[RMDB]
RNA sequence: GGGAACGACUCGAGUAGAGUCGAAAAGUGUGGGGAAUACCUUCAUCUGUGAAGAAGUCGCAAAUGACCUCACUACCGCCCUACGCAGGCCUAUUAACGCUACGGAUAGAUCACAUUAUUAUGUGGACAAGAAGAAAGACUUCGGUCUUUCUUCUUGAAAAGAAACAACAACAACAAC
Reactivity to 2A3 in 0.01 (KOAc 150mM, MgCl2 10mM, bicine 150mM(pH8.5), 24C), signal-to-noise 3, nucleotides 027 to 126: g030u030g010u010g000g000g000g000a040a080u080a180c000c000u010u010c030a050u000c020u090g090u050g050a030a120g100a110a030g150u050c020g000c070a020a000a090u060g020a050c000c000u000c020a020c000u010a020c020c030g010c000c000c000u020a030c030g040c020a020g020g120c010c010u110a120u100u110a110a020c040g000c020u060a010c010g020g010a030u030a080g090a050u070c010a000c010a000u000u120a070u230u110a090u180g050u040g000g040a010
Reactivity to DMS in 0.01 (KOAc 150mM, MgCl2 10mM, bicine 150mM(pH8.5), 24C), signal-to-noise 3, nucleotides 027 to 126: g000u010g010u000g010g000g010g000a200a160u000a100c150c070u020u000c020a070u000c100u020g030u000g000a060a180g010a080a110g020u000c060g010c090a030a020a120u000g010a170c030c010u000c000a010c020u000a070c080c090g000c010c000c010u000a050c070g000c060a060g010g000c050c060u010a070u000u000a030a130c090g010c020u000a050c030g000g010a130u000a080g000a120u010c000a000c000a020u000u000a110u010u020a050u000g010u000g020g000a240